Source information:
The record gives the reactivity of an RNA of 177 nucleotides to 2A3 and DMS. For DMS the reverse transcriptase was MarathonRT. The 2A3 profile rests on 1,018 reads. Reactivities are rounded to 0.1 and cut off at 0 and 3. Values cover nucleotides 27 to 126. For 2A3 the reverse transcriptase was SuperScript II with manganese.

RNA sequence: GGGAACGACUCGAGUAGAGUCGAAAACUGUGCCAUCUUACAUCCGUAGGUGAUCAGAGGGGAAAAGAAGAGCUAGAGCAACUCCCACACUCAUGAGCGUCCUCAUACUGUUCUGGGCGCUUCUCACAUGGAGCAAUCCUUUCGAGGAUUGCUCCAUAAAAGAAACAACAACAACAAC
Reactivity to 2A3 in 0.01 (KOAc 150mM, MgCl2 10mM, bicine 150mM(pH8.5), 24C), signal-to-noise 2, nucleotides 027 to 126: c010u000g040u070g020c000c000a040u000c030u080u100a060c050a060u040c010c050g090u100a030g020g090u140g030a040u040c040a030g030a040g050g000g030g020a050a110a000a060g130a050a020g000a010g030c050u030a010g040a030g080c010a000a020c020u010c030c050c000a020c000a040c010u150c060a090u130g030a020g020c000g010u010c010c000u040c030a030u140a240c070u080g080u300u190c080u040g000g010g000c030g000c000u000u010c000u020c000a090c050
Reactivity to DMS in 0.01 (KOAc 150mM, MgCl2 10mM, bicine 150mM(pH8.5), 24C), signal-to-noise 1, nucleotides 027 to 126: c060u000g030u000g070c080c060a150u030c000u060u040a060c030a030u030c130c160g020u030a070g000g020u000g040a050u030c090a000g000a130g020g000g100g000a010a100a080a040g000a070a000g000a050g000c040u000a030g000a010g000c030a020a140c050u000c000c030c000a110c220a170c030u000c060a090u000g000a090g000c020g000u010c000c010u030c110a120u050a080c110u000g000u000u040c100u010g000g000g000c110g000c030u000u020c020u000c020a080c240